Structure probing data (2A3 and DMS) for a 177-nucleotide construct.
The 2A3 profile rests on 56,717 reads.
Source: RMDB library TTRDES, as collected in RNAgym.
For DMS the reverse transcriptase was MarathonRT.
RNA sequence: GGGAACGACUCGAGUAGAGUCGAAAAGAUAUGGAACGAGGUCCGCAGCGAUGAAGUGUGGUCGGAAACGACCACAUGGAGCUGGGACUCGUUCCUAAGUCAAAACGCAUCAGUUCGCUGAUGCGAACAAUGUUGAUUACUUCGGUAAUCAACAUUGAAAAGAAACAACAACAACAAC
Reactivity to 2A3 in 0.01 (KOAc 150mM, MgCl2 10mM, bicine 150mM(pH8.5), 24C), signal-to-noise 9, nucleotides 027 to 126: g010a020u060a030u140g010g010a000a010c010g010a020g120g300u140c040c060g300c280a020g000c020g300a300u030g010a020a010g010u010g000u000g010g010u010c010g000g010a030a060a040c010g000a000c000c000a000c000a000u000g000g000a010g000c010u050g000g000g010a000c000u000c000g000u000u000c000c000u000a000a000g000u000c010a000a020a060a130c030g000c000a010u000c000a010g110u100u230c290g000c190u000g000a000u010g000c000g000a020a010
Reactivity to DMS in 0.01 (KOAc 150mM, MgCl2 10mM, bicine 150mM(pH8.5), 24C), signal-to-noise 9, nucleotides 027 to 126: g010a030u010a300u010g010g000a010a010c000g010a020g010g020u010c010c010g020c090a030g010c010g010a110u010g000a130a190g010u000g020u000g010g010u000c000g010g000a080a100a190c010g010a010c000c000a010c000a000u000g000g000a040g020c010u000g010g000g010a100c010u000c000g000u000u000c000c000u000a000a080g000u000c040a080a080a120a220c030g000c010a010u000c000a010g010u000u010c250g030c000u000g000a010u000g010c000g010a050a120